[RMDB]
Chemical mapping of a 177-nucleotide RNA with 2A3 and DMS. It was measured as part of the RMDB libraries RFM100 and RFMREP. The RNA was probed in 150 mM KOAc, 10 mM MgCl2 and 150 mM bicine (pH 8.5) at 24 C.
RNA sequence: GGGAACGACUCGAGUAGAGUCGAAAAAAAAUGUCGGAAAGCUAGGCUGGAGAGCAAAAAUUCGACCCAAACAGUUUUAGCUGUGGAAAUGUUUGUAGAGGUACAGGCUGUCGAAGAUUAUGUAGUGGGUAUAUGUGAAAUUCGUUUCACAUAUACCAAAAGAAACAACAACAACAAC
Reactivity to 2A3 in 0.01 (KOAc 150mM, MgCl2 10mM, bicine 150mM(pH8.5), 24C), signal-to-noise 9, nucleotides 027 to 126: a000a000a000a000u100g010u030c020g020g010a120a030a010g020c020u040a030g090g000c020u030g040g010a060g010a010g060c030a020a060a020a000a030u030u020c010g010a030c000c010c000a030a090a020c010a010g020u050u090u180u300a020g000c000u000g000u030g040g010a060a090a070u110g020u020u030u020g030u010a080g030a040g160g080u030a010c010a010g020g000c010u020g010u020c010g010a010a020g010a060u090u080a060u150g090u050a060g090u110g120
Reactivity to DMS in 0.01 (KOAc 150mM, MgCl2 10mM, bicine 150mM(pH8.5), 24C), signal-to-noise 9, nucleotides 027 to 126: a050a030a060a050u020g010u010c030g000g010a080a060a050g010c050u010a050g010g010c040u000g010g010a110g010a100g010c040a010a040a050a070a120u010u000c020g010a060c020c100c030a060a090a040c020a010g000u000u030u020u020a090g010c010u000g000u000g000g000a060a080a030u020g010u000u000u000g010u000a030g010a120g010g010u000a020c040a020g000g010c020u000g010u000c020g000a030a020g000a060u020u000a050u010g010u010a060g020u010g000